Structure probing data (DMS and 2A3) for a 177-nucleotide construct.
[RMDB]
RNA sequence: GGGAACGACUCGAGUAGAGUCGAAAAGAUUACGUGUCGUUGUGGAAUCGAUACUACGCACGAGAUUCCAAGGUCUCUGAAGUACGUCCGCUGGUGACGUCUUUGGAGUCACGUUCGAUAUACGAAACGUAUCUACUACGUUCGCGUAGUAGAUACGAAAAGAAACAACAACAACAAC
Reactivity to DMS in 0.01 (KOAc 150mM, MgCl2 10mM, bicine 150mM(pH8.5), 24C), signal-to-noise 6, nucleotides 027 to 126: g000a070u010u030a080c050g000u010g000u020c030g020u000u000g020u010g010g030a090a060u020c080g000a080u020a070c070u010a070c040g000c080a050c040g000a300g020a030u000u000c010c010a090a050g010g000u010c010u010c020u000g000a010a000g010u020a010c010g010u010c000c020g040c210u020g010g010u030g010a010c000g010u000c000u000u010u000g000g000a020g020u000c020a040c090g010u020u020c010g000a090u030a070u040a070c030g000a060a090a150
Reactivity to 2A3 in 0.01 (KOAc 150mM, MgCl2 10mM, bicine 150mM(pH8.5), 24C), signal-to-noise 7, nucleotides 027 to 126: g040a060u090u120a050c010g000u010g090u110c020g030u030u070g030u020g050g090a100a070u130c030g010a010u030a100c020u020a010c010g010c010a000c020g020a040g010a050u030u000c010c010a080a060g060g000u000c010u000c000u000g000a010a000g020u170a010c000g000u000c000c010g050c230u120g090g130u250g010a000c000g000u000c000u000u000u000g000g000a010g000u010c010a040c080g060u060u080c050g030a040u060a020u050a260c100g060a070a080a010

For DMS, 15,114 sequencing reads were counted.